RNA sequence: GGGAACGACUCGAGUAGAGUCGAAAAGAUAUGGAUACUGGUUUAGCGUGCACGAUCCUUGGAUUUACAAAUCGGAAACGAUUUGUUGUCAGGAUCGUGAACUACACGCACCGUAGUAUCCUAAGUCGUAUCAUUGUUUCUUCGGAAACAAUGAUACAAAAGAAACAACAACAACAAC
Reactivity to DMS in 0.01 (KOAc 150mM, MgCl2 10mM, bicine 150mM(pH8.5), 24C), signal-to-noise 4, nucleotides 027 to 126: g010a100u010a300u010g000g000a010u000a010c000u010g000g000u000u010u010a140g020c010g020u010g000c000a010c000g010a010u000c000c000u010u010g040g000a020u000u010u000a020c000a010a020a000u010c010g030g000a150a080a260c010g010a010u000u000u000g010u000u000g000u000c000a040g000g010a020u000c000g020u000g010a000a020c120u020a300c010a000c000g020c020a050c020c010g010u010a040g020u000a010u000c000c000u010a080a120g010u010c120
Reactivity to 2A3 in 0.01 (KOAc 150mM, MgCl2 10mM, bicine 150mM(pH8.5), 24C), signal-to-noise 4, nucleotides 027 to 126: g050a070u190a050u230g020g000a010u010a020c030u070g090g060u080u230u300a050g000c000g000u010g020c000a010c010g010a010u030c010c000u060u210g290g000a030u300u210u160a010c010a000a000a010u020c000g010g080a080a070a040c010g020a020u000u000u020g010u000u020g000u020c020a030g000g000a000u040c000g000u000g000a010a010c000u080a020c000a000c000g000c000a000c010c000g020u030a010g000u000a000u020c000c000u010a120a030g110u110c090